[RMDB]
This 177-nucleotide RNA was probed chemically with 2A3 and DMS. The reactions ran in a buffer of 150 mM KOAc, 10 mM MgCl2 and 150 mM bicine (pH 8.5), at 24 C. Source: RMDB library OK2TST, as collected in RNAgym. DMS adducts were read by reverse transcription with MarathonRT.
RNA sequence: GGGAACGACUCGAGUAGAGUCGAAAAGAAUCACCGAGCGCGGGUCGAUGGCUUUCAUGCUGCCGUCACGUUCGACCCGGAUGAAUCCGACGCCGUAUUCCUGCGCAUGGCGCUGUGCGUUUGUCACGAUAGUGAACCAAUUCGUUGGUUCACUAUCAAAAGAAACAACAACAACAAC
Reactivity to 2A3 in 0.01 (KOAc 150mM, MgCl2 10mM, bicine 150mM(pH8.5), 24C), signal-to-noise 8, nucleotides 027 to 126: g030a030a070u080c020a010c070c020g020a030g060c040g000c020g020g020g000u030c040g010a030u060g020g010c010u150u230u160c090a090u230g040c040u050g030c040c010g060u090c040a030c100g040u070u070c050g020a090c010c020c000g000g010a040u040g030a030a060u020c030c040g020a030c050g040c030c010g010u030a090u040u060c020c010u030g010c010g000c030a070u060g080g000c040g000c060u040g010u030g010c020g000u050u150u130g140u100c060a020c130
Reactivity to DMS in 0.01 (KOAc 150mM, MgCl2 10mM, bicine 150mM(pH8.5), 24C), signal-to-noise 9, nucleotides 027 to 126: g010a120a100u000c040a080c040c010g000a050g010c040g010c030g000g010g010u000c040g010a030u000g010g010c030u000u000u010c210a090u010g010c070u000g020c050c020g010u000c040a080c120g010u000u000c050g010a090c020c010c000g010g000a040u010g000a070a080u000c040c050g000a090c070g010c040c020g000u000a130u000u000c020c010u000g010c070g010c040a070u000g010g010c050g010c040u000g020u000g010c050g010u000u000u010g010u010c080a110c220
Reactivities are given for positions 27 through 126.